[RMDB]
RNA sequence: GGGAACGACUCGAGUAGAGUCGAAAAGGGCCACGCACCGGGGAACCGGCAAAAGCAUGAGAUACACAACUACGACAAAGAACGAUGGGUGUGCAAGGUGUGAGGCACCCGUAGCCUUACGGUCCCCGCGGUCAUACCCGUGGGUAUGGGAGACGACACCACUUAUAUGAUUCGUCAUAUAAGUGGUAAAAGAAACAACAACAACAAC
Reactivity to DMS in 0.01 (KOAc 150mM, MgCl2 10mM, bicine 150mM(pH8.5), 24C), signal-to-noise 5, nucleotides 027 to 156: g010g020g030c010c020a070c070g030c030a050c020c000g040g000g040g000a110a130c010c020g030g020c080a030a060a100a110g030c030a120u000g010a150g030a200u010a080c050a070c040a050a050c030u000a060c030g020a300c070a100a100a130g010a080a100c060g000a120u010g020g000g020u000g030u000g010c000a070a100g020g020u000g010u000g000a130g010g010c010a030c030c010c010g020u000a060g010c030c020u000u000a060c020g010g000u000c020c020c000c020g010c040g020g010u000c070a070u010a050c090c010c020g010u010g020g010g030u010a040u000g000g020g000a130g010a110c060g010a160c120
Reactivity to 2A3 in 0.01 (KOAc 150mM, MgCl2 10mM, bicine 150mM(pH8.5), 24C), signal-to-noise 8, nucleotides 027 to 156: g010g000g020c020c010a020c030g060c020a040c020c040g020g000g000g020a070a110c010c020g050g020c080a060a070a020a040g040c030a050u110g020a030g030a100u190a060c060a010c020a140a100c070u150a030c070g090a040c080a080a170a050g080a220a010c040g080a130u100g030g010g000u040g010u030g050c050a070a050g070g010u030g020u050g040a070g040g000c010a040c000c010c010g020u030a020g030c010c020u060u090a030c020g020g010u040c010c010c010c010g020c030g010g010u050c010a040u090a110c010c000c010g020u050g020g000g010u070a060u110g040g020g010a070g010a020c040g000a000c020